[RMDB]
Chemical mapping of a 177-nucleotide RNA with DMS. DMS adducts were read by reverse transcription with MarathonRT. Values are in units of 0.01, from 0 to 300, in steps of 10. Source: RMDB library M2PK50, as collected in RNAgym. For DMS, 1,013 sequencing reads were counted.

RNA sequence: GGGAACGACUCGAGUAGAGUCGAAAAGGCUCCACCUUCGGGUGGAGCCAUCUACCGAGAAAGCAGCUCGGUAUAAAAGUGCAACCCUUGGAAACAAGGGAAUAAGCCCCUGGUUCGCCAGGGGCAACUUAGCGACAUAGUUCGCUAUGUCGCUAAGAAAAGAAACAACAACAACAAC
Reactivity to DMS in 0.01 (KOAc 150mM, MgCl2 10mM, bicine 150mM(pH8.5), 24C), signal-to-noise 1, nucleotides 027 to 126: g020g040c000u010c000c010a010c000c000u010u020c240g010g020g060u000g000g010a010g070c000c000a000u000c010u000a270c020c000g000a010g010a120a080a160g040c040a050g020c010u010c010g000g020u010a030u020a060a050a040a040g010u000g010c040a170a220c000c000c000u010u020g010g000a130a080a170c000a010a020g000g020g000a020a010u010a090a100g020c010c000c000c010u000g000g030u040u000c170g010c030c000a010g000g010g000g010c000a000a010